[RMDB]
RNA sequence: GGGAACGACUCGAGUAGAGUCGAAAAUGUUCUUGAUGAACUUGGAAAGAAUACGCUCCAUUAAUUGCGCAGCCUCCAAUUGACCAUUCUUGCAUCCAUUUUCAACCAUACCUUUGAUCCAACUGGAGUGCUAAAGUUUGUUCGCAAACUUUAGCACAAAAGAAACAACAACAACAAC
Reactivity to 2A3 in 0.01 (KOAc 150mM, MgCl2 10mM, bicine 150mM(pH8.5), 24C), signal-to-noise 2, nucleotides 027 to 126: u050g000u010u040c020u030u140g060a110u110g010a040a050c040u030u070g060g040a120a160a060g040a170a060u060a100c050g000c030u000c000c020a060u070u150a120a090u120u100g070c060g020c030a000g040c020c010u050c010c010a040a050u040u070g000a010c020c000a030u050u000c000u020u080g000c010a040u070c030c020a040u070u020u040u080c040a040a070c010c000a020u060a090c050c020u060u040u130g070a060u150c000c000a040a090c070u020g030g000a030
Reactivity to DMS in 0.01 (KOAc 150mM, MgCl2 10mM, bicine 150mM(pH8.5), 24C), signal-to-noise 2, nucleotides 027 to 126: u020g040u000u010c040u000u020g020a220u010g020a020a090c050u000u000g010g020a090a070a090g000a040a060u000a070c160g030c060u000c120c010a090u000u000a030a090u000u000g030c030g000c050a080g020c020c030u000c020c030a020a090u010u000g000a060c080c000a120u000u010c090u000u000g000c070a070u000c050c050a100u010u010u010u000c050a070a130c030c020a030u000a060c050c030u000u000u000g010a070u000c000c010a050a100c120u020g000g010a300